[RMDB]
RNA sequence: GGGAACGACUCGAGUAGAGUCGAAAAUGGUUUGUGAAGGUAAGUGGCAUCAUGACUUUAUCAUAUCCAGAAAAGAGCUAACUGAUGAGCUACUUGAUACACACUUGGCGAAUUUCACAACAUUGAAAUUUCAGAAAUGCAUUAAGCUCUAGAAAUACCUCCUCUAAAAUUUCGAUUUUAGAGGAGGAAAAGAAACAACAACAACAAC
Reactivity to DMS in 0.01 (KOAc 150mM, MgCl2 10mM, bicine 150mM(pH8.5), 24C), signal-to-noise 2, nucleotides 027 to 156: u010g030g010u000u000u000g020u010g030a110a120g030g020u000a040a050g050u010g020g050c020a060u000c030a040u010g010a090c020u000u000u000a050u000c030a070u000a150u000c040c040a300g000a140a100a080a090g000a070g000c070u000a070a150c240u000g000a050u000g010a090g010c000u000a010c020u000u000g010a060u000a000c000a070c020a050c070u000u010g000g040c090g020a050a050u000u000u010c000a020c040a040a120c050a130u010u000g000a070a070a100u010u010u000c040a150g010a110a070a140u010g020c070a100u000u020a020a070g000c040u000c020u000a090g010a050a000a130u000a140
Reactivity to 2A3 in 0.01 (KOAc 150mM, MgCl2 10mM, bicine 150mM(pH8.5), 24C), signal-to-noise 3, nucleotides 027 to 156: u050g040g010u070u040u040g010u010g010a020a030g060g030u020a040a000g000u010g030g000c010a020u000c000a010u040g070a210c020u030u030u150a010u050c000a060u070a060u110c050c040a020g160a040a130a030a000g020a020g030c100u090a040a090c080u030g010a000u010g000a030g000c020u120a100c000u040u000g000a000u080a040c140a010c000a010c100u010u020g010g000c110g060a090a080u030u000u010c010a010c010a050a000c000a020u030u060g090a100a100a090u040u040u000c020a020g080a150a110a040u090g030c000a030u110u000a090a040g020c000u010c000u110a040g020a000a000a260u300a020